[RMDB]
RNA sequence: GGGAACGACUCGAGUAGAGUCGAAAAGAUAUGGAUAAUCUUGGGUACGUUGAAAUCGGAAACGAUGGAGUAUUACAAGAGUUAUCCUAAGUCAAAAGCUAGGCAGAUGUUCGCAUCUGCCUAGCAACAAACGCACAAACUUCGGUUUGUGCGUUUGAAAAGAAACAACAACAACAAC
Reactivity to DMS in 0.01 (KOAc 150mM, MgCl2 10mM, bicine 150mM(pH8.5), 24C), signal-to-noise 2, nucleotides 027 to 126: g000a040u000a300u010g000g010a020u000a030a010u000c000u000u010g000g000g010u030a020c000g010u000u000g000a100a090a020u000c010g000g000a130a080a180c010g020a020u010g000g010a110g000u000a010u000u000a100c000a030a000g010a030g000u010u000a000u000c000c000u000a060a150g000u000c050a140a050a140a140g000c000u010a020g000g000c000a010g000a000u000g000u010u020c260g040c000a000u000c000u020g000c000c000u000a010g010c000a020a050